[RMDB]
RNA sequence: GGGAACGACUCGAGUAGAGUCGAAAAAGCCCAGCUUGAGAGAUAGGACUCGUAAGACCAACACACACUUCUUACGAGUGUCUCUCAAGCCAUACAGAGUGAUUGUGGUAAGAAGUGUGUGUUGGUCUUACCACUCCUCUCACUCUGUAUGUGGGCACGAUGCUACUAUGUUCGCAUAGUAGCAUCGAAAAGAAACAACAACAACAAC
Reactivity to DMS in 0.01 (KOAc 150mM, MgCl2 10mM, bicine 150mM(pH8.5), 24C), signal-to-noise 1, nucleotides 027 to 156: a120g010c010c010c000a070g000c060u000u030g000a020g010a030g020a050u000a050g040g050a070c040u000c090g000u000a010a000g020a000c010c000a050a020c040a010c030a010c040a030c030u000u000c000u000u000a020c030g060a210g040u000g000u020c020u000c010u000c000a060a050g010c040c060a100u020a260c100a170g000a030g020u000g000a060u020u020g060u000g040g000u010a020a030g000a020a050g070u000g010u000g000u000g020u000u020g000g000u010c000u000u000a010c000c020a080c060u000c060c030u000c190u000c020a070c020u000c010u020g030u000a050u000g020u000g010g050g060c020a230

An RNA of 207 nucleotides, treated with DMS and read out base by base. The reactions ran in a buffer of 150 mM KOAc, 10 mM MgCl2 and 150 mM bicine (pH 8.5), at 24 C.